[RMDB]
RNA sequence: GGGAACGACUCGAGUAGAGUCGAAAAGAGUAGUAGUUCGCUACUACUCAAAGGCACAAAAGCCACAGUUCUAAAGUGCAUGGAACACGCCAAGUGCCCGUGAAAGUAAAUCCUUCGGGAUUUACAAAGUAUCAAUGGGGUUCGCCCCAUUGAUACUAAAAGAAACAACAACAACAAC
Reactivity to DMS in 0.01 (KOAc 150mM, MgCl2 10mM, bicine 150mM(pH8.5), 24C), signal-to-noise 3, nucleotides 027 to 126: g000a020g010u000a020g010u010a010g000u000u010c230g050c000u000a000c010u000a000c000u000c000a010a050a070g010g020c010a000c010a010a060a180a110g000c020c060a110c300a110g000u000u000c000u000a030a070a190g010u010g000c250a110u000g000g010a030a010c000a180c280g000c010c000a050a220g000u000g000c000c010c100g020u030g010a090a050a110g010u000a000a000a000u000c000c000u000u000c110g020g000g000a010u000u010u000a010c010a090a110
Reactivity to 2A3 in 0.01 (KOAc 150mM, MgCl2 10mM, bicine 150mM(pH8.5), 24C), signal-to-noise 2, nucleotides 027 to 126: g000a000g000u010a000g000u010a000g000u000u050c180g000c100u010a010c000u000a000c010u000c000a000a010a000g000g000c000a020c010a020a130a010a000g000c000c050a040c030a040g020u010u040c020u040a120a140a090g270u190g210c040a090u130g050g000a000a010c000a000c020g000c000c010a080a020g000u000g020c000c000c020g100u130g180a150a010a000g000u020a000a020a000u000c010c000u000u060c200g090g010g000a010u000u000u000a000c000a010a120
Structure probing data (DMS and 2A3) for a 177-nucleotide construct. For DMS, 1,656 sequencing reads were counted. The RNA was probed in 150 mM KOAc, 10 mM MgCl2 and 150 mM bicine (pH 8.5) at 24 C. DMS (dimethyl sulfate) methylates the pairing face of unpaired adenines and cytosines.